[RMDB]
RNA sequence: GGGAACGACUCGAGUAGAGUCGAAAAUGAAGAAAAUUGAGGUCCAUGAAGAUGCUGGCUAAGAGGAGGGGGCAGCAGAGCAAGAAUGGCCUUUCCCAGUCUUCAUCCAAAAUGAGGGCCAAGCGUCCAGCGGGAAAAUCUUCGGAUUUUCCCGCUGAAAAGAAACAACAACAACAAC
Reactivity to DMS in 0.01 (KOAc 150mM, MgCl2 10mM, bicine 150mM(pH8.5), 24C), signal-to-noise 1, nucleotides 027 to 126: u020g020a120a000g000a050a000a230a000u000u000g030a260g010g000u010c050c030a050u020g000a120a220g030a010u010g010c000u000g000g010c010u030a010a150g010a120g020g000a110g000g000g000g000g000c060a060g000c060a130g000a100g000c190a080a120g000a080a070u000g000g000c020c010u000u000u000c000c020c010a180g030u030c000u000u000c000a030u000c070c090a020a110a170a050u000g000a080g030g010g010c000c010a080a060g000c070g020u020c080
Reactivity to 2A3 in 0.01 (KOAc 150mM, MgCl2 10mM, bicine 150mM(pH8.5), 24C), signal-to-noise 2, nucleotides 027 to 126: u120g060a070a070g110a030a160a050a120u190u200g020a080g030g050u020c040c040a040u040g020a010a010g040a020u030g010c030u010g090g030c070u090a200a010g060a110g130g020a050g000g040g020g040g030c020a000g020c040a010g040a050g080c080a140a050g110a130a060u080g060g000c000c000u000u000u020c010c000c010a000g000u010c000u020u010c000a040u000c020c040a020a170a140a180u140g020a130g000g000g000c010c000a020a010g060c000g050u020c000
The data come from the RNA Mapping Database (RMDB), library OK1LIB. An RNA of 177 nucleotides, treated with DMS and 2A3 and read out base by base. The reactions ran in a buffer of 150 mM KOAc, 10 mM MgCl2 and 150 mM bicine (pH 8.5), at 24 C. The 2A3 profile rests on 1,084 reads. Reactivities are given for positions 27 through 126.